Chemical mapping of a 177-nucleotide RNA with DMS and 2A3. Values are in units of 0.01, from 0 to 300, in steps of 10. It was measured as part of the RMDB libraries RFM100 and RFMREP. Conditions: 150 mM KOAc, 10 mM MgCl2 and 150 mM bicine (pH 8.5), 24 C.
RNA sequence: GGGAACGACUCGAGUAGAGUCGAAAACAUGUUUUUCGACAAUGUGGUGAUCGCCGGAGUGCUGACUGUCGGCCUCAUGGUUCUGUUUUUCGCAGGGUUUGGAUUCUUUAUCUGGAAAGACGCGAAUCACUAUACUUAGCUUCGGCUAAGUAUAGUGAAAAGAAACAACAACAACAAC
Reactivity to DMS in 0.01 (KOAc 150mM, MgCl2 10mM, bicine 150mM(pH8.5), 24C), signal-to-noise 3, nucleotides 027 to 126: c060a130u010g010u000u010u000u020u000c020g020a040c030a080a100u020g020u010g010g010u020g000a090u000c070g010c010c050g000g010a080g020u010g020c030u000g010a110c100u010g020u010c030g030g000c040c030u010c020a040u010g000g010u010u000c050u000g000u000u000u000u000u000c030g040c030a110g000g010g030u000u000u010g000g000a100u000u010c090u010u020u030a060u020c040u000g010g020a040a040a030g020a040c100g000c100g020a110a080u000
Reactivity to 2A3 in 0.01 (KOAc 150mM, MgCl2 10mM, bicine 150mM(pH8.5), 24C), signal-to-noise 7, nucleotides 027 to 126: c050a050u160g100u020u020u020u040u050c020g010a020c030a090a070u120g030u070g100g050u060g050a070u040c050g010c020c010g020g020a040g020u130g030c030u040g060a120c040u080g060u150c010g030g000c000c000u030c030a080u070g040g010u050u020c020u030g060u020u040u020u050u030c030g010c060a050g030g000g040u020u030u070g080g030a090u060u020c010u030u120u090a130u010c030u030g040g060a090a020a020g070a020c050g010c040g110a030a030u020